Source information:
Structure probing data (DMS and 2A3) for a 177-nucleotide construct. Source: RMDB library TTRDES, as collected in RNAgym. The reactions ran in a buffer of 150 mM KOAc, 10 mM MgCl2 and 150 mM bicine (pH 8.5), at 24 C. 2A3 adducts were read by reverse transcription with SuperScript II with manganese. Values are in units of 0.01, from 0 to 300, in steps of 10. DMS (dimethyl sulfate) methylates the pairing face of unpaired adenines and cytosines. Reactivities are given for positions 27 through 126.

[RMDB]
RNA sequence: GGGAACGACUCGAGUAGAGUCGAAAAGAUAUGGAGCACAUCACCUCCCCACCCUCCGAUUCGGAAACGAAUUAGGAGGAGGGUGAGUGUGCUCCUAAGUCAAAACCUUCACGUUCGCGUGAAGGAACAAAACACGAGAGUUCGCUCUCGUGUUUUGAAAAGAAACAACAACAACAAC
Reactivity to DMS in 0.01 (KOAc 150mM, MgCl2 10mM, bicine 150mM(pH8.5), 24C), signal-to-noise 3, nucleotides 027 to 126: g000a030u000a300u010g000g020a040g020c010a020c000a020u010c020a050c050c030u000c090c010c010c060a300c040c010c000u000c000c000g010a010u000u010c000g000g000a140a090a200c000g020a010a010u000u000a120g050g000a030g010g010a050g000g010g020u000g000a300g020u000g020u000g000c000u010c010c000u000a000a110g000u010c080a110a080a080a170c000c000u000u000c000a010c010g000u000u000c240g020c010g070u000g010a020a000g000g000a030a050
Reactivity to 2A3 in 0.01 (KOAc 150mM, MgCl2 10mM, bicine 150mM(pH8.5), 24C), signal-to-noise 2, nucleotides 027 to 126: g030a010u100a030u190g000g000a000g000c000a000c000a000u040c010a010c010c010u050c010c020c000c000a070c010c000c000u000c000c000g020a020u000u000c000g020g040a050a070a040c000g020a030a020u040u100a300g000g010a010g000g000a020g000g010g000u010g010a110g140u110g000u010g000c000u000c000c000u020a080a030g050u020c030a000a040a120a240c010c000u000u000c000a020c010g040u060u130c300g020c000g160u010g010a000a000g000g010a010a010